[RMDB]
RNA sequence: GGGAACGACUCGAGUAGAGUCGAAAAACCGCUGCCCCACAAGGGCACCGACAGGCGCAUCACAGAUAUCACCGAAUGACUUCGGAGUGAUCUGGCGCAGUUUCCCGGCUGAAUUCCAAAGGCCUCGCUCCUAUGUUACCUUCGGGUAACAUAGGAGAAAAGAAACAACAACAACAAC
Reactivity to DMS in 0.01 (KOAc 150mM, MgCl2 10mM, bicine 150mM(pH8.5), 24C), signal-to-noise 1, nucleotides 027 to 126: a050c100c050g040c300u000g010c000c000c000c100a200c300a070a300g000g000g000c010a010c110c010g010a070c180a020g000g040c070g010c010a080u000c050a300c020a000g000a050u000a010u000c000a050c040c000g010a000a070u000g050a080c270u000u010c000g000g000a020g050u010g000a000u000c010u010g000g000c080g010c000a050g000u020u010u000c000c000c050g010g020c050u000g020a050a210u000u010c130c130a080a060a130g000g000c000c060u000c060g000
Reactivity to 2A3 in 0.01 (KOAc 150mM, MgCl2 10mM, bicine 150mM(pH8.5), 24C), signal-to-noise 1, nucleotides 027 to 126: a000c010c000g000c000u000g010c000c000c000c000a130c000a070a030g020g010g020c000a000c020c000g010a010c040a070g130g000c000g000c010a050u210c040a020c010a030g020a000u020a030u030c010a010c000c000g000a040a040u210g250a200c200u030u000c000g010g000a000g020u010g000a020u000c000u020g000g000c000g000c000a000g000u010u030u000c020c000c000g000g010c000u040g030a120a160u300u170c070c020a160a020a000g000g030c000c030u040c080g010